[RMDB]
RNA sequence: GGGAACGACUCGAGUAGAGUCGAAAAGAUAUGGAAGCCUACAGAGGGAGCUGAGUGUUACAGCAAUAUAUCGGAAACGAUAUAUUGAAGGUGGCUCAGCGAGGAUCUCUGACGGGCUUCCUAAGUCGAAGUGAUGUAUGUUCGCAUACAUCACUUCAAAAGAAACAACAACAACAAC
Reactivity to DMS in 0.01 (KOAc 150mM, MgCl2 10mM, bicine 150mM(pH8.5), 24C), signal-to-noise 2, nucleotides 027 to 126: g000a110u000a300u010g000g010a020a010g030c000c000u010a180c010a020g010a050g000g020g010a050g010c000u010g000a020g010u000g000u000u010a040c000a170g000c010a010a000u000a000u000a000u000c000g010g000a090a110a300c010g010a010u000a000u000a010u000u000g000a020a040g000g000u000g010g010c000u000c000a010g000c000g010a040g020g000a020u000c000u000c010u010g000a070c230g010g020g020c010u010u020c000c000u000a000a080g000u000c140
Reactivity to 2A3 in 0.01 (KOAc 150mM, MgCl2 10mM, bicine 150mM(pH8.5), 24C), signal-to-noise 2, nucleotides 027 to 126: g030a030u120a020u170g000g000a000a000g000c000c000u020a030c020a020g000a010g020g030g040a020g000c000u010g020a000g010u100g180u300u240a020c010a030g060c000a020a000u000a000u000a000u000c020g000g010a020a090a060c000g010a010u000a000u010a010u030u000g030a060a050g080g020u050g160g000c010u000c020a000g030c030g000a030g000g000a020u000c000u010c030u110g100a300c230g000g050g000c000u000u000c000c000u010a000a000g040u030c110